[RMDB]
RNA sequence: GGGAACGACUCGAGUAGAGUCGAAAAUGAACACAGCAGUUUAUCGUUAGUUUGUGCACAUUGGAUGUAAUUUCGGGGUUGCUCCAUUACGCAUUUAUGCGGUCGUUGAGGAAAAGCUCCAUCAUCGAAAUCGAUGCAGCUUCGGCUGCAUCGAUUUAAAAGAAACAACAACAACAAC
Reactivity to DMS in 0.01 (KOAc 150mM, MgCl2 10mM, bicine 150mM(pH8.5), 24C), signal-to-noise 1, nucleotides 027 to 126: u040g010a060a140c000a000c030a020g040c010a090g000u030u040u020a030u090c200g020u040u000a110g010u000u040u010g010u000g050c130a080c010a020u000u000g000g000a060u000g010u010a170a030u000u000u000c090g000g040g000g000u000u000g000c090u000c010c040a030u060u000a140c020g010c020a150u000u010u010a010u000g000c020g000g030u000c040g070u000u020g110a060g030g000a090a200a160a050g010c110u000c000c000a010u000c140a020u010c030g000
Reactivity to 2A3 in 0.01 (KOAc 150mM, MgCl2 10mM, bicine 150mM(pH8.5), 24C), signal-to-noise 1, nucleotides 027 to 126: u000g010a000a000c060a000c060a060g000c060a000g070u000u000u300a120u090c060g160u000u100a090g000u000u060u130g020u000g000c000a010c070a190u000u220g080g000a000u000g100u090a170a270u000u230u300c040g000g060g000g030u220u130g000c000u000c000c000a000u060u030a030c090g000c000a060u110u110u290a220u090g000c000g060g000u050c180g070u090u060g020a110g000g010a140a120a100a000g000c000u010c000c000a000u030c000a000u010c000g040
Conditions: 150 mM KOAc, 10 mM MgCl2 and 150 mM bicine (pH 8.5), 24 C. Structure probing data (DMS and 2A3) for a 177-nucleotide construct. DMS adducts were read by reverse transcription with MarathonRT. The data come from the RNA Mapping Database (RMDB), library OK1LIB.